Source: RMDB library OK3TST, as collected in RNAgym. This 207-nucleotide RNA was probed chemically with DMS and 2A3. The reactions ran in a buffer of 150 mM KOAc, 10 mM MgCl2 and 150 mM bicine (pH 8.5), at 24 C. For 2A3, 2,383 sequencing reads were counted. 2A3 adducts were read by reverse transcription with SuperScript II with manganese.
RNA sequence: GGGAACGACUCGAGUAGAGUCGAAAAAAUAUCAGUUAUCACAGAUUGGUAUGCGUUGGUCCAUGUUAUGUAUUUGCCUGAAUCAACCCUAAGACUGGUUGGCUUAUUUCUGCCUUUUCUUUUCCAAAAGGUAUACUUGACAUGAAGUAGACUGUGAACUAGCGAUUAAUUUCGAUUAAUCGCUAGUAAAAGAAACAACAACAACAAC
Reactivity to DMS in 0.01 (KOAc 150mM, MgCl2 10mM, bicine 150mM(pH8.5), 24C), signal-to-noise 3, nucleotides 027 to 156: a040a050u000a020u000c010a040g030u000u010a080u000c140a110c140a170g010a050u000u000g010g020u000a020u000g010c120g000u000u010g010g010u000c020c020a050u000g020u000u010a060u000g010u000a080u010u000u000g040c020c030u020g030a070a070u000c040a030a070c030c010c030u010a100a110g010a110c080u010g010g010u010u010g020g010c060u010u000a060u000u000u000c040u000g020c010c020u000u000u000u000c030u000u000u000u000c120c050a030a040a070a030g020g020u000a020u000a010c030u000u000g010a070c090a070u000g020a020a060g010u000a050g010a090c040u000g010u000g010a090
Reactivity to 2A3 in 0.01 (KOAc 150mM, MgCl2 10mM, bicine 150mM(pH8.5), 24C), signal-to-noise 4, nucleotides 027 to 156: a010a000u190a020u040c030a040g030u070u080a110u150c030a020c000a040g070a100u060u110g010g020u080a070u100g070c050g050u070u070g040g010u000c020c000a010u030g000u020u060a060u060g060u020a070u050u090u170g060c020c010u040g100a060a020u060c030a040a030c020c010c050u130a170a050g060a100c060u040g050g000u020u040g010g030c010u090u030a120u080u120u010c050u030g020c020c000u040u040u070u050c030u060u160u040u030c040c020a070a040a010a000g010g000u020a020u010a020c000u030u040g030a010c010a030u060g030a050a020g030u060a040g020a060c050u040g030u040g040a030